[RMDB]
RNA sequence: GGGAACGACUCGAGUAGAGUCGAAAAAUUCAACCUCACGGAAGAUCCUCAGGACUAUAUUUCUUCUUCACCAUCUCCAUCAUUGGAACGAAUUCGUAAAAGCUACCUGGCCAGCCGUGACUGAGGAGCAUACUACUGAGUUCGCUCAGUAGUAUGCAAAAGAAACAACAACAACAAC
Reactivity to 2A3 in 0.01 (KOAc 150mM, MgCl2 10mM, bicine 150mM(pH8.5), 24C), signal-to-noise 9, nucleotides 027 to 126: a000u150u070c040a050a060c000c010u040c020a030c020g040g010a070a020g030a130u050c010c010u030c020a030g050g040a090c110u050a060u050a110u260u100u020c030u050u020c000u060u040c020a050c040c010a070u040c020u010c050c010a070u120c010a090u120u200g040g010a040a020c040g040a080a080u140u120c040g020u110a020a060a050a040g010c010u030a070c010c010u020g030g030c000c010a030g020c000c020g030u020g040a040c030u020g020a020g030g010a020
Reactivity to DMS in 0.01 (KOAc 150mM, MgCl2 10mM, bicine 150mM(pH8.5), 24C), signal-to-noise 4, nucleotides 027 to 126: a040u020u020c070a070a160c070c030u020c070a050c080g010g010a060a140g000a070u010c030c020u000c000a050g000g000a140c090u000a110u010a080u020u010u000c050u010u000c040u010u010c060a090c020c040a060u000c050u010c020c010a050u010c080a060u010u000g010g010a050a060c100g000a090a070u010u020c080g010u040a050a070a070a100g010c030u000a040c010c010u010g000g020c020c020a070g010c000c010g000u000g020a050c040u000g000a040g000g010a150